The record gives the reactivity of an RNA of 177 nucleotides to 2A3 and DMS. The RNA was probed in 150 mM KOAc, 10 mM MgCl2 and 150 mM bicine (pH 8.5) at 24 C. The data come from the RNA Mapping Database (RMDB), library 15KREP. For DMS the reverse transcriptase was MarathonRT.
RNA sequence: GGGAACGACUCGAGUAGAGUCGAAAACACGCAACAAGUGGAGUGGCGUUUCUGACUUGUCCCUCAAACAAAAACUCCUUUACACCUUCUAUGGUAAGGAGUCACUUGAGAACCCAACCUACAUUUAACUACGUGAUAGGUUCGCCUAUCACGUAGUAAAAGAAACAACAACAACAAC
Reactivity to 2A3 in 0.01 (KOAc 150mM, MgCl2 10mM, bicine 150mM(pH8.5), 24C), signal-to-noise 2, nucleotides 027 to 126: c040a030c040g120c040a070a020c010a010a130g020u020g050g060a060g040u040g060g000c040g040u000u080u080c100u110g070a090c040u050u130g030u040c010c020c000u020c010a160a160a100c050a040a080a020a000a000c010u000c000c000u000u030u060a090c050a020c010c010u180u150c100u200a100u300g000g010u000a010a010g020g010a000g000u010c010a000c010u030u030g010a030g000a060a020c000c000c030a000a020c030c010u130a130c060a170u080u090u050a050
Reactivity to DMS in 0.01 (KOAc 150mM, MgCl2 10mM, bicine 150mM(pH8.5), 24C), signal-to-noise 2, nucleotides 027 to 126: c150a070c140g040c120a110a060c030a100a040g000u010g040g010a130g020u000g000g010c100g010u000u000u010c100u010g050a070c060u010u000g000u010c070c010c020u000c090a040a040a110c180a060a040a080a170a070c010u000c000c000u010u000u010a080c250a020c010c000u000u010c200u010a060u010g010g010u000a050a000g000g000a000g010u000c010a040c070u000u010g010a100g000a160a130c030c000c010a100a070c100c060u020a090c150a090u000u020u000a050